Background:
An RNA of 177 nucleotides, treated with DMS and read out base by base. Reactivities are given for positions 27 through 126.
RNA sequence: GGGAACGACUCGAGUAGAGUCGAAAAUCGACGAACGGCGCGACGACCCGGCGGAUGUCGGCCUCAACUGUCAUCGCUACCCCCGACCGCUACCUCGUUGCCGAAAUCAUCGACCACCGUGCGCCGGCGUUGACAGGUUGUUCGCAACCUGUCAACGAAAAGAAACAACAACAACAAC
Reactivity to DMS in 0.01 (KOAc 150mM, MgCl2 10mM, bicine 150mM(pH8.5), 24C), signal-to-noise 1, nucleotides 027 to 126: u020c070g040a040c120g010a070a110c040g000g000c050g010c040g030a040c010g020a130c070c060c110g040g020c090g010g010a080u000g000u000c020g000g000c020c040u010c110a070a100c100u010g010u000c060a070u000c030g010c060u010a220c050c040c000c060c030g030a060c040c050g010c060u000a030c080c060u000c090g000u000u000g030c000c000g000a070a070a050u000c050a090u000c000g010a100c060c000a120c050c010g000u000g020c030g000c010c010g000g000
The DMS profile rests on 1,083 reads.